[RMDB]
RNA sequence: GGGAACGACUCGAGUAGAGUCGAAAAUGAGUCCUUCGGGGCCCGGUUGCUCGGAAGUGAUGAAUUGAUCAGAUAGACGAGGCCGGGCUUGUCCCGGGCCACUGAUUAUCGAGGCGAUUCUGAUCUGGUUCAUGCCUUAUUUCGAUAAGGCAUGAACAAAAGAAACAACAACAACAAC
Reactivity to 2A3 in 0.01 (KOAc 150mM, MgCl2 10mM, bicine 150mM(pH8.5), 24C), signal-to-noise 2, nucleotides 027 to 126: u080g010a010g050u040c040c000u020u020c060g000g000g030g000c010c000c000g050g020u170u230g010c000u000c000g010g030a010a110g130u050g150a070u010g050a080a170u120u080g000a020u000c000a000g170a230u100a030g140a000c040g020a060g000g030c000c000g000g000g000c010u000u040g010u000c000c000c000g010g020g000c000c000a060c030u100g040a090u090u110a060u110c020g020a040g070g040c050g060a080u030u000c010u010g010a080u000c040u020g020
Reactivity to DMS in 0.01 (KOAc 150mM, MgCl2 10mM, bicine 150mM(pH8.5), 24C), signal-to-noise 2, nucleotides 027 to 126: u010g000a080g000u010c000c000u020u030c080g000g010g010g000c000c020c040g000g000u020u020g050c060u000c060g000g000a130a100g010u030g000a090u010g010a110a100u010u000g000a050u000c070a140g020a030u010a100g020a270c130g010a120g000g010c000c010g000g000g000c000u010u020g000u020c060c000c010g010g030g030c000c000a060c090u010g000a140u030u000a060u010c020g000a180g020g000c060g000a080u000u000c000u000g000a060u020c020u020g010

The record gives the reactivity of an RNA of 177 nucleotides to 2A3 and DMS. The data come from the RNA Mapping Database (RMDB), library RFM100. For DMS the reverse transcriptase was MarathonRT.